The record gives the reactivity of an RNA of 177 nucleotides to 2A3 and DMS. The data come from the RNA Mapping Database (RMDB), library RFMREP.
[RMDB]
RNA sequence: GGGAACGACUCGAGUAGAGUCGAAAAUCAGCGAGACGAAACUGGUUUUCACAGUGAUUUGACAGAUAUAUUUGAUUCUGAGAUCAUUGUGAAAGCUGAUUUUGUUCAAAACCUGCGUUCGCGCAGGCGACAGUAUAGUCUUCGGACUAUACUGUCGAAAAGAAACAACAACAACAAC
Reactivity to 2A3 in 0.01 (KOAc 150mM, MgCl2 10mM, bicine 150mM(pH8.5), 24C), signal-to-noise 4, nucleotides 027 to 126: u070c010a010g130c010g130a120g010a100c010g010a000a010a010c020u030g000g020u000u010u000u000c000a000c000a000g000u000g010a020u010u050u120g160a090c020a020g050a010u030a000u020a130u170u270u240g120a080u110u000c010u010g000a010g000a030u000c000a010u000u010g000u000g000a000a000a000g010c000u000g000a000u000u000u010u030g030u070u060c030a030a050a070a100c010c000u010g010c020g020u040u070c170g000c010g000c090a000g000g010
Reactivity to DMS in 0.01 (KOAc 150mM, MgCl2 10mM, bicine 150mM(pH8.5), 24C), signal-to-noise 2, nucleotides 027 to 126: u010c030a130g030c180g000a170g000a010c020g010a000a010a000c010u000g010g020u000u000u000u010c010a010c000a010g010u000g000a010u000u000u020g010a220c010a000g010a010u010a100u010a150u010u000u010g000a150u000u000c000u010g010a190g010a000u000c000a010u000u000g010u000g000a010a000a000g020c000u000g000a030u000u000u000u000g010u000u000c050a100a040a080a170c000c000u000g000c010g000u000u000c240g020c020g020c000a010g000g010
Record summary: For 2A3 the reverse transcriptase was SuperScript II with manganese. DMS adducts were read by reverse transcription with MarathonRT. The reactions ran in a buffer of 150 mM KOAc, 10 mM MgCl2 and 150 mM bicine (pH 8.5), at 24 C. The DMS profile rests on 2,791 reads.